An RNA of 177 nucleotides, treated with DMS and read out base by base. The RNA was probed in 150 mM KOAc, 10 mM MgCl2 and 150 mM bicine (pH 8.5) at 24 C.
RNA sequence: GGGAACGACUCGAGUAGAGUCGAAAAUCGUGUUGAACCUGGUGUAGUUCAUUAUCAGUUCACAGCUGGUGUCCCUGGCUCUGGUAAAUCCCGGUCAAUUCAACAAGGAGAUGUGGACGUAAUAGUGCCCCAAAAACAUCUUCGGAUGUUUUUGGGGAAAAGAAACAACAACAACAAC
Reactivity to DMS in 0.01 (KOAc 150mM, MgCl2 10mM, bicine 150mM(pH8.5), 24C), signal-to-noise 1, nucleotides 027 to 126: u000c090g070u000g040u000u010g000a030a060c100c070u010g000g030u000g030u010a130g000u000u000c140a150u010u040a050u000c070a050g030u000u010c100a060c060a080g000c010u010g000g010u000g020u010c030c020c010u000g000g020c010u010c020u000g000g000u000a040a030a130u000c070c010c030g010g000u000c120a060a080u010u020c070a030a110c060a060a100g010g000a060g000a050u000g020u000g000g000a030c090g010u010a050a100u010a060g000u010g020

Reactivities are given for positions 27 through 126. Source: RMDB library OK2TRN, as collected in RNAgym.